[RMDB]
RNA sequence: GGGAACGACUCGAGUAGAGUCGAAAAGGGUGUCGAUCAGGUCCAAGACACCUAACGAUCCUCGGACCUGAUCUGAUGUCGGGUUUUUACCUUAGGCUCUUUUGAGCGACGUCAGUAGGAUCGGAAAGGGUUGGUGCUAGUUCGCUAGCACUGACCCAAAAGAAACAACAACAACAAC
Reactivity to 2A3 in 0.01 (KOAc 150mM, MgCl2 10mM, bicine 150mM(pH8.5), 24C), signal-to-noise 9, nucleotides 027 to 126: g090g000g010u030g010u020c020g010a020u020c010a000g000g000u010c010c010a060a020g040a010c020a020c030c000u010a080a010c020g020a020u000c000c020u040c080g010g000a000c000c000u000g000a010u010c020u030g000a000u010g010u020c020g000g010g010u050u050u030u160u260a070c010c000u070u170a160g090g000c010u020c000u070u220u160u300g010a010g000c010g010a010c010g010u000c010a020g030u060a020g020g020a020u020c020g020g030a080a090a060
Reactivity to DMS in 0.01 (KOAc 150mM, MgCl2 10mM, bicine 150mM(pH8.5), 24C), signal-to-noise 9, nucleotides 027 to 126: g010g010g010u000g010u000c060g000a050u000c020a020g000g000u000c010c020a180a120g010a060c040a030c030c020u010a050a050c080g000a030u000c000c000u000c120g010g010a020c000c010u000g010a030u010c000u010g010a000u000g000u000c020g000g010g000u010u030u040u020u040a030c010c000u000u040a120g010g020c000u010c000u010u030u020u020g010a020g000c010g000a010c010g010u000c020a130g010u020a080g000g000a050u000c010g000g010a100a110a120
Structure probing data (2A3 and DMS) for a 177-nucleotide construct. For DMS, 68,225 sequencing reads were counted. The RNA was probed in 150 mM KOAc, 10 mM MgCl2 and 150 mM bicine (pH 8.5) at 24 C. Source: RMDB library OK1LIB, as collected in RNAgym. DMS adducts were read by reverse transcription with MarathonRT. In probing experiments dimethyl sulfate is read out at A N1 and C N3, which are open when not base-paired.